[RMDB]
RNA sequence: GGGAACGACUCGAGUAGAGUCGAAAAGAGCAACUUAGGAUUUUAGGCUCCCCGGUGCGUCUCUAACCGCGCCGGGCCAAACCCACAGGGGCUGGCGGUCCUGUGCGGUCAAAAUCUUUCCGCUGGAAUACCUAUCCCAGUUUCGACUGGGAUAGAACUCGUUUAAUAGUUUCGACUAUUAAACGAGAAAAGAAACAACAACAACAAC
Reactivity to 2A3 in 0.01 (KOAc 150mM, MgCl2 10mM, bicine 150mM(pH8.5), 24C), signal-to-noise 1, nucleotides 027 to 156: g000a000g000c000a010a120c080u060u030a070g110g000a110u040u000u030u040a040g020g030c010u020c000c000c010c000g000g000u010g000c020g060u040c080u050c100u300a090a060c070c000g000c000g000c000c000g000g000g040c000c000a020a000a010c000c000c010a000c000a010g010g000g000g010c020u000g010g000c000g000g010u010c000c000u000g020u010g000c270g000g000u070c020a010a000a010a070u030c020u150u120u030c010c000g020c010u010g020g010a130a050u130a180c010c010u000a000u000c000c000c000a000g000u000u020u130c160g070a030c010u000g020g000g000a000u000a000g000a000a010
The record gives the reactivity of an RNA of 207 nucleotides to 2A3. Values cover nucleotides 27 to 156. The RNA was probed in 150 mM KOAc, 10 mM MgCl2 and 150 mM bicine (pH 8.5) at 24 C.